[RMDB]
The record gives the reactivity of an RNA of 207 nucleotides to DMS and 2A3. The reactions ran in a buffer of 150 mM KOAc, 10 mM MgCl2 and 150 mM bicine (pH 8.5), at 24 C. For 2A3, 2,713 sequencing reads were counted. 2A3 adducts were read by reverse transcription with SuperScript II with manganese.

RNA sequence: GGGAACGACUCGAGUAGAGUCGAAAAUUUAGAGGAUAGUUUUAGUUAGCCCUGUUUACGGGAGUAAUUAUUACGAAAUUUAAUAGUAAACUAAACUUGUAGAAGCUUAUGGUCAUUAUGAUUUCGGACACGAGUUCGACUCUCGUCAUCUCCACCAGAUAGUUAUAGAGUUCGCUCUAUAACUAUCAAAAGAAACAACAACAACAAC
Reactivity to DMS in 0.01 (KOAc 150mM, MgCl2 10mM, bicine 150mM(pH8.5), 24C), signal-to-noise 2, nucleotides 027 to 156: u010u010u000a090g010a090g030g020a190u000a060g000u000u000u000u000a030g010u000u010a080g000c010c000c000u000g020u000u000u020a050c090g030g010g000a040g010u010a030a050u000u000a040u000u000a120c010g000a050a090a070u000u000u010a070a060u000a110g010u020a070a060a060c020u000a020a040a040c030u000u000g020u000a190g000a050a040g020c010u000u010a030u000g030g000u020c040a090u000u010a070u000g010a090u000u010u000c040g020g010a140c120a030c080g000a120g010u000u000c020g030a100c010u000c000u000c030g020u000c040a100u010c020u000c040c030a100c080c050a180
Reactivity to 2A3 in 0.01 (KOAc 150mM, MgCl2 10mM, bicine 150mM(pH8.5), 24C), signal-to-noise 3, nucleotides 027 to 156: u110u090u060a020g000a030g040g030a050u040a070g040u030u030u070u060a040g010u050u050a060g000c000c010c010u040g060u060u070u030a030c030g000g000g010a010g020u010a030a040u110u060a040u110u070a050c020g030a100a020a050u100u180u060a060a020u100a020g040u040a000a060a040c000u030a120a030a030c030u030u090g020u050a090g060a260a000g020c020u110u120a030u210g050g000u040c020a040u020u120a010u100g070a040u040u060u060c050g010g020a010c010a000c070g040a050g030u030u070c020g030a040c010u000c010u000c010g050u000c000a040u020c040u020c030c020a060c000c010a010